Structure probing data (DMS and 2A3) for a 177-nucleotide construct.
Reactivities are given for positions 27 through 126.
For DMS the reverse transcriptase was MarathonRT.

RNA sequence: GGGAACGACUCGAGUAGAGUCGAAAACAACGCAUUUAGCUGCGUUCCGGGCGCAUGGUGGUCGACCGCCGGUGGGUGUGACAGUCUUCGUGGAGGGCGAAGAAGAAUCCGGAUCGCCGUCGCUGGAAUACCGUCCAUUAUUCGUAAUGGACGGUAUAAAAGAAACAACAACAACAAC
Reactivity to DMS in 0.01 (KOAc 150mM, MgCl2 10mM, bicine 150mM(pH8.5), 24C), signal-to-noise 5, nucleotides 027 to 126: c100a080a080c020g020c020a040u000u000u000a090g000c180u000g000c010g010u000u000c020c010g000g000g030c030g020c110a050u010g020g040u000g010g010u000c040g020a130c080c030g020c040c020g020g020u010g010g010g030u000g000u010g010a130c150a130g000u000c030u000u000c010g020u000g020g000a110g000g010g010c020g000a020a030g000a040a070g000a100a110u000c070c070g000g000a040u000c020g010c010c020g000u000c050g020c000u000g000g010a200
Reactivity to 2A3 in 0.01 (KOAc 150mM, MgCl2 10mM, bicine 150mM(pH8.5), 24C), signal-to-noise 5, nucleotides 027 to 126: c020a010a020c020g000c030a050u090u140u250a080g040c040u030g010c010g020u070u000c010c000g040g020g010c030g000c060a030u090g020g000u020g010g000u050c030g060a100c040c030g030c020c010g120g050u150g090g030g010u090g010u070g050a040c040a080g060u000c010u020u010c020g020u060g030g110a150g060g110g000c010g000a000a000g010a010a020g050a020a050u040c060c000g060g010a010u010c010g010c030c000g030u040c020g000c020u020g020g000a010